The record gives the reactivity of an RNA of 177 nucleotides to 2A3 and DMS. For 2A3, 1,838 sequencing reads were counted.
RNA sequence: GGGAACGACUCGAGUAGAGUCGAAAAUUUACGGUAUUCGUACCGUAAACGACCAAGCAAGCAGCGCAACGAGACAAGACGAUAAUAAGAUCGAGCAUGCUGAUAGUAGGAUCUUCGGAUCCUACAACAGUCUUAUUGCGUUCGCGCAAUAAGACUGAAAAGAAACAACAACAACAAC
Reactivity to 2A3 in 0.01 (KOAc 150mM, MgCl2 10mM, bicine 150mM(pH8.5), 24C), signal-to-noise 2, nucleotides 027 to 126: u000u000u010a010c000g000g000u010a030u030u070c180g040u030a040c000c000g000u010a000a000a000c020g040a060c040c020a000a010g060c020a000a120g000c000a010g000c020g000c110a140a080c040g030a010g070a090c040a090a000g050a030c080g060a060u100a180a040u130a180a080g090a130u050c030g000a030g020c030a040u090g000c020u030g020a070u140a130g000u000a000g000g020a000u000c000u000u000c110g100g000a020u010c000c000u000a000c000a000a000
Reactivity to DMS in 0.01 (KOAc 150mM, MgCl2 10mM, bicine 150mM(pH8.5), 24C), signal-to-noise 2, nucleotides 027 to 126: u000u000u000a000c000g010g000u000a020u000u000c170g060u020a010c000c030g020u000a000a000a040c040g000a200c000c000a060a060g010c090a080a130g000c030a080g040c060g000c080a050a100c020g050a030g000a040c060a080a040g020a080c050g000a050u020a060a120u000a060a080g000a060u000c010g020a100g000c170a070u000g020c030u020g000a130u000a120g010u000a010g010g000a030u000c000u000u020c240g010g000a010u000c000c000u000a000c010a090a130
Description:
Conditions: 150 mM KOAc, 10 mM MgCl2 and 150 mM bicine (pH 8.5), 24 C.